Source: RMDB library OK1LIB, as collected in RNAgym. The record gives the reactivity of an RNA of 177 nucleotides to 2A3 and DMS. The DMS profile rests on 22,993 reads. The reactions ran in a buffer of 150 mM KOAc, 10 mM MgCl2 and 150 mM bicine (pH 8.5), at 24 C.
[RMDB]
RNA sequence: GGGAACGACUCGAGUAGAGUCGAAAAGACUGGCUGUGGAGCCGUCAGCACCUCGUCCUUACCUUUUUUGGCGGCUUUUACAUAUUUCGAUAUGUAUUAUGCUGGACGACAAGCCAGCACAAUUAGAGGGUUGGCAUUAGUUCGCUGGUGCCAACCCAAAAGAAACAACAACAACAAC
Reactivity to 2A3 in 0.01 (KOAc 150mM, MgCl2 10mM, bicine 150mM(pH8.5), 24C), signal-to-noise 9, nucleotides 027 to 126: g070a050c020u030g010g040c020u030g020u050g100g010a020g010c010c000g000u010c000a000g050c020a040c010c040u030c030g030u020c010c010u090u170a230c030c030u160u160u070u020u070u090g020g000c000g000g000c000u000u010u000u000a010c010a000u020a010u020u100u070c190g110a010u000a000u010g000u000a010u020u020a060u100g070c050u020g010g020a030c020g020a030c070a070a000g000c010c000a010g040c010a010c030a060a110u180u130a070g040a090
Reactivity to DMS in 0.01 (KOAc 150mM, MgCl2 10mM, bicine 150mM(pH8.5), 24C), signal-to-noise 7, nucleotides 027 to 126: g010a150c000u010g000g010c040u000g010u010g010g000a090g000c000c040g010u010c020a070g010c020a040c040c110u000c050g000u000c000c010u010u020a110c130c050u000u010u020u020u010u020g010g020c060g000g000c010u000u010u000u000a000c000a000u000a000u000u000u040c150g010a010u000a000u000g010u000a000u010u010a020u020g010c110u000g000g010a020c000g000a060c300a100a040g010c010c000a000g000c030a130c220a070a060u020u020a080g020a300
For 2A3 the reverse transcriptase was SuperScript II with manganese. DMS adducts were read by reverse transcription with MarathonRT.